[RMDB]
RNA sequence: GGGAACGACUCGAGUAGAGUCGAAAAGAUAUGGACUAAUCGACAGGUCGAAGAACGCAGUUCGGAAACGAACUGCGGGAGACCAUGUCGAGUUAGUCCUAAGUCAAAAGGUGGCUUCGGCCACCAAGCACUAUGUUAAGUUCGCUUAACAUAGUGCAAAAGAAACAACAACAACAAC
Reactivity to DMS in 0.01 (KOAc 150mM, MgCl2 10mM, bicine 150mM(pH8.5), 24C), signal-to-noise 5, nucleotides 027 to 126: g010a060u000a300u000g000g010a010c000u010a030a020u000c000g000a010c000a050g000g000u000c000g020a140a170g000a140a210c010g000c000a010g000u000u000c000g030g000a110a100a190c010g010a020a010c000u000g010c000g000g000g000a070g000a010c000c010a070u000g010u000c000g000a040g010u000u000a010g000u000c000c000u000a010a090g000u000c060a100a080a130a130g010g020u010g020g000c000u000u020c220g030g020c010c000a010c000c000a020a070
Reactivity to 2A3 in 0.01 (KOAc 150mM, MgCl2 10mM, bicine 150mM(pH8.5), 24C), signal-to-noise 5, nucleotides 027 to 126: g030a010u090a060u160g000g000a010c010u010a000a040u020c000g000a000c000a010g010g010u010c020g150a300a030g020a060a010c010g000c020a000g010u010u000c000g040g030a070a050a050c010g000a010a000c000u010g000c000g000g000g000a020g000a000c000c080a220u030g000u000c000g010a010g000u020u010a000g010u000c000c000u000a040a010g060u040c030a040a030a060a200g020g000u010g010g000c020u070u160c300g190g000c010c010a000c000c000a010a000